An RNA of 207 nucleotides, treated with 2A3 and read out base by base.
Source: RMDB library OK3TST, as collected in RNAgym.
For 2A3, 604 sequencing reads were counted.

RNA sequence: GGGAACGACUCGAGUAGAGUCGAAAAGGUCGAUGUACGUCGCGUAAGUGUGCGUGUGCGGGCGCGCCCUAAGAGGAUGCGCUAGCGCGUGUGAAUGAGUGCGUAGAAGGUUGGCAGGGAAAGUCAGUUAGGACGUUCGGAUCGAGCCGCGCGGACGCGGCAGCGUACGCUUCGGCGUACGCUGCCGAAAAGAAACAACAACAACAAC
Reactivity to 2A3 in 0.01 (KOAc 150mM, MgCl2 10mM, bicine 150mM(pH8.5), 24C), signal-to-noise 1, nucleotides 027 to 156: g010g010u050c020g040a020u070g020u110a020c030g020u010c010g000c020g140u050a060a070g080u070g040u050g090c130g000u080g020u010g000c110g020g000g030c000g000c000g020c000c000c010u070a120a000g180a200g040g010a100u050g010c000g040c020u010a030g010c000g090c000g030u020g000u010g090a070a050u050g010a050g050u090g030c020g020u000a050g010a100a040g010g020u060u090g010g090c090a050g020g050g000a020a040a020g040u030c050a010g010u040u100a010g020g050a030c030g020u030u000c000g040g020a080u020c020g000a010g080c050c000g000c000g000c000g000g000a060c000g010